RNA sequence: GGGAACGACUCGAGUAGAGUCGAAAAUAUGCGAUGCUCGAAUGGAAGCGUCACAGUACGGCGGCGAAGCAAGUCAACCAAGACUACUACGUCGACAAAUUCAAUGACUGGUCCUAUGCGUCCUUUAUCGAACCUGAGAAUAAAGAGGCAGUACUAACGAGCUAAAUAGUUUCGACUAUUUAGCUCGAAAAGAAACAACAACAACAAC
Reactivity to 2A3 in 0.01 (KOAc 150mM, MgCl2 10mM, bicine 150mM(pH8.5), 24C), signal-to-noise 4, nucleotides 027 to 156: u210a050u100g030c060g020a000u050g000c020u040c040g090a170a200u150g000g060a090a000g050c010g000u000c010a030c030a040g050u130a050c040g030g010c000g000g000c010g040a000a000g000c190a070a000g010u000c010a010a160c120c030a210a050g000a000c010u030a020c020u000a020c020g030u000c010g040a010c060a010a070a050u200u110c060a060a100u080g040a010c010u070g070g050u060c020c020u070a070u140g000c010g010u080c010c010u020u050u050a120u050c060g050a040a070c020c040u100g050a040g020a130a030u120a070a030a020g060a110g060g020c060a020g020u070a080c070u050a070a100
Reactivity to DMS in 0.01 (KOAc 150mM, MgCl2 10mM, bicine 150mM(pH8.5), 24C), signal-to-noise 2, nucleotides 027 to 156: u000a060u000g030c000g020a090u010g060c000u000c030g040a130a100u020g040g000a080a040g010c050g010u000c010a040c000a130g050u000a110c060g000g050c040g000g040c020g030a100a040g040c000a040a030g050u010c030a110a230c300c220a140a120g050a040c000u000a050c030u000a090c030g060u000c020g040a020c020a040a060a110u010u000c110a120a090u030g000a100c080u000g010g000u010c040c020u000a110u000g030c010g010u020c030c020u000u000u010a060u030c090g020a060a180c050c120u000g000a190g000a090a080u010a030a060a050g060a160g000g050c020a060g000u000a060c200u040a060a180